RNA sequence: GGGAACGACUCGAGUAGAGUCGAAAAGCAGUAUCUCGUUAGGCGAGGCUCCUAUACAAACACAGGUUGCUGAUCUGACGACGUCGAGAGACGCCCAAGAUUAGGACAGGAUAUAUCGAACCACGGUGAACCUGUCCAGGGUUCGCCCUGGACAGAAGCAAUUAGCACAGUUCGCUGUGCUAAUUGCAAAAGAAACAACAACAACAAC
Reactivity to DMS in 0.01 (KOAc 150mM, MgCl2 10mM, bicine 150mM(pH8.5), 24C), signal-to-noise 1, nucleotides 027 to 156: g060c060a080g000u000a010u010c010u000c050g040u000u000a140g000g040c000g010a170g000g030c010u010c010c000u000a110u000a200c010a090a080a080c090a120c110a090g000g020u000u010g020c010u020g010a050u000c010u010g000a260c050g050a010c020g000u000c040g000a300g010a300g000a050c000g000c000c060c090a270a070g020a100u000u000a020g020g000a090c030a130g000g000a100u000a030u000a040u000c050g010a050a050c010c050a050c040g010g040u030g020a050a110c070c000u000g030u000c020c060a010g000g010g030u010u010c300g010c000c000c000u010g000g010a040c000a020g030a030a130
Reactivity to 2A3 in 0.01 (KOAc 150mM, MgCl2 10mM, bicine 150mM(pH8.5), 24C), signal-to-noise 4, nucleotides 027 to 156: g060c040a000g030u150a140u060c020u030c040g010u090u160a090g050g080c030g020a030g010g020c010u030c010c020u090a110u080a140c120a070a170a000c070a030c050a040g140g000u100u160g090c010u010g010a020u000c010u070g000a030c020g030a050c010g030u020c010g010a010g010a010g000a070c000g000c010c000c000a020a020g040a030u050u050a010g000g040a010c020a040g040g010a030u080a010u030a040u190c050g030a050a010c030c000a060c020g070g000u070g020a030a030c010c010u000g000u000c000c000a000g030g010g010u030u060c130g130c000c000c000u000g000g010a000c000a010g010a000a010